[RMDB]
RNA sequence: GGGAACGACUCGAGUAGAGUCGAAAAAGUACGUCUAUCCCGUCUACGGAUGGGAUGAGAGCGUUGGGCCUAAUCUUAAGAACGUGCUAGAGAUGGUCGACUGCCCUGAGUUCUUACCGACUCGUCGUAGUAGUGGUUUCUUCGGAAACCACUACUAAAAAGAAACAACAACAACAAC
Reactivity to 2A3 in 0.01 (KOAc 150mM, MgCl2 10mM, bicine 150mM(pH8.5), 24C), signal-to-noise 1, nucleotides 027 to 126: a010g140u080a010c020g000u000c020u010a020u000c010c010c000g000u030c000u020a040c210g120g010a010u020g000g030g000a000u170g010a000g000a000g020c000g000u010u010g040g020g000c010c000u060a110a110u050c030u090u070a100a040g040a150a040c090g220u110g080c090u060a000g020a000g000a150u090g050g020u000c060g040a010c070u080g070c000c000c050u030g020a030g000u050u000c010u040u070a070c020c040g000a000c020u010c000g060u040c060g060
Reactivity to DMS in 0.01 (KOAc 150mM, MgCl2 10mM, bicine 150mM(pH8.5), 24C), signal-to-noise 2, nucleotides 027 to 126: a100g030u010a010c040g010u000c020u000a060u000c000c000c000g040u000c010u000a090c170g030g000a010u000g010g010g000a000u000g020a050g000a060g000c030g040u010u000g030g030g010c000c020u010a080a110u000c010u010u000a110a100g000a160a100c160g010u000g010c100u000a130g000a060g000a140u000g010g020u000c010g010a090c080u000g000c030c030c020u000g010a050g000u000u000c020u010u010a150c140c110g010a010c060u000c020g000u000c120g010